[RMDB]
RNA sequence: GGGAACGACUCGAGUAGAGUCGAAAAGAUAUGGAUGGUUUCUUUGAUCAUUGCGUAACAUCCGUCGGAAACGACGGUGGCAAUGGGAGAAAGAAGUCCUAAGUCAAAACGCGAGUUCGCUCGCGAAGUAGCGUAAACGCUUCGGCGUUUACGCUACAAAAGAAACAACAACAACAAC
Reactivity to DMS in 0.01 (KOAc 150mM, MgCl2 10mM, bicine 150mM(pH8.5), 24C), signal-to-noise 1, nucleotides 027 to 126: g010a030u000a300u000g000g000a020u020g040g030u000u000u000c000u000u020u000g020a300u030c000a000u000u000g020c000g030u000a000a060c270a010u000c000c040g000u010c000g010g000a160a060a190c010g000a020c010g010g020u000g010g000c020a010a000u000g000g000g000a230g000a010a020a000g000a020a120g000u000c000c000u000a040a170g040u000c040a100a090a230a100c040g000c000g000a000g000u000u020c280g020c030u000c010g050c010g000a030a050
Reactivity to 2A3 in 0.01 (KOAc 150mM, MgCl2 10mM, bicine 150mM(pH8.5), 24C), signal-to-noise 1, nucleotides 027 to 126: g000a010u040a010u170g060g000a020u040g120g070u170u000u000c010u090u120u070g100a050u070c000a000u010u000g000c010g000u090a010a040c010a270u080c000c030g000u010c000g010g110a090a050a010c010g000a010c010g000g030u010g000g000c000a000a000u000g020g000g000a050g300a040a020a000g060a020a010g040u030c020c000u040a090a050g100u100c000a000a010a090a180c030g030c000g030a000g000u110u160c300g090c140u020c020g020c000g030a080a020